[RMDB]
Source: RMDB library OK2TRN, as collected in RNAgym. Chemical mapping of a 177-nucleotide RNA with 2A3 and DMS. For DMS, 31,108 sequencing reads were counted. Conditions: 150 mM KOAc, 10 mM MgCl2 and 150 mM bicine (pH 8.5), 24 C.

RNA sequence: GGGAACGACUCGAGUAGAGUCGAAAACGGUUAAAGUACAGGCGGGUACGGCAGAGUGCGGCCGCAUUACUUUUGUAAUGAGCACUCCGGCCGCAGCCUCCGUCGCCGCCUCGACGGAGGGGACCUGCAUUAUUUUAUCGUUCGCGAUAAAAUAAUGAAAAGAAACAACAACAACAAC
Reactivity to 2A3 in 0.01 (KOAc 150mM, MgCl2 10mM, bicine 150mM(pH8.5), 24C), signal-to-noise 4, nucleotides 027 to 126: c030g030g050u180u180a250a190a070g010u020a020c010a000g010g000c010g010g020g000u020a020c050g130g050c140a050g040a020g180u060g010c000g000g010c010c010g000c010a000u030u020a010c010u090u300u180u300g000u000a010a010u010g010a020g100c040a030c120u010c020c030g000g010c000c000g010c000a020g050c000c000u000c000c000g000u000c000g000c010c010g000c000c000u000c000g000a000c000g000g010a010g000g000g000g020a050c040c050u060g000
Reactivity to DMS in 0.01 (KOAc 150mM, MgCl2 10mM, bicine 150mM(pH8.5), 24C), signal-to-noise 9, nucleotides 027 to 126: c070g010g010u010u010a080a100a140g010u000a030c030a020g000g000c010g000g000g010u000a020c010g020g010c180a100g000a080g020u000g010c000g020g020c030c040g000c010a010u000u000a000c000u000u010u010u010g010u000a010a010u000g000a160g020c100a150c040u000c160c030g010g000c000c010g010c010a080g010c010c000u000c000c000g010u000c010g000c010c020g000c010c010u000c010g000a010c010g000g000a020g000g000g010g010a070c120c070u000g010
DMS adducts were read by reverse transcription with MarathonRT. The 2A3 profile rests on 16,275 reads.